About this RNA:
The record gives the reactivity of an RNA of 177 nucleotides to 2A3 and DMS. The RNA was probed in 150 mM KOAc, 10 mM MgCl2 and 150 mM bicine (pH 8.5) at 24 C. For 2A3, 1,832 sequencing reads were counted.
RNA sequence: GGGAACGACUCGAGUAGAGUCGAAAAUGGACUCAGGCGGGGUCCAAGCCUUGGCCUCAGCUUCCUUCUCUGUCUGGGCGUGGCAGUGUUACCUGAUGUGGCAUUGUCAGGAUGGAGGAUGACAGCAAGACUUACAGCAGUUCGCUGCUGUAAGUCUAAAAGAAACAACAACAACAAC
Reactivity to 2A3 in 0.01 (KOAc 150mM, MgCl2 10mM, bicine 150mM(pH8.5), 24C), signal-to-noise 1, nucleotides 027 to 126: u040g020g000a010c000u010c040a040g010g170c070g030g050g020g000u000c040c050a010a030g040c000c010u070u080g130g000c000c010u030c030a050g030c000u000u030c000c000u090u050c020u000c010u010g030u000c010u060g050g000g150c150g110u070g010g000c000a010g010u030g020u010u030a050c040c090u130g110a150u300g050u050g000g000c040a030u060u000g000u000c050a030g000g030a020u010g010g000a020g040g010a050u100g000a000c050a040g000c060a100
Reactivity to DMS in 0.01 (KOAc 150mM, MgCl2 10mM, bicine 150mM(pH8.5), 24C), signal-to-noise 1, nucleotides 027 to 126: u000g020g000a060c010u000c060a120g010g020c070g010g000g020g000u010c030c070a070a060g000c030c030u020u010g040g000c030c020u000c090a080g020c040u010u000c020c040u000u010c030u000c020u000g040u010c050u000g000g020g030c150g010u030g000g000c040a020g020u000g010u010u000a020c010c220u010g010a140u020g040u000g000g000c020a000u000u010g010u000c020a050g010g010a080u000g000g000a040g000g000a070u000g000a050c100a060g010c110a100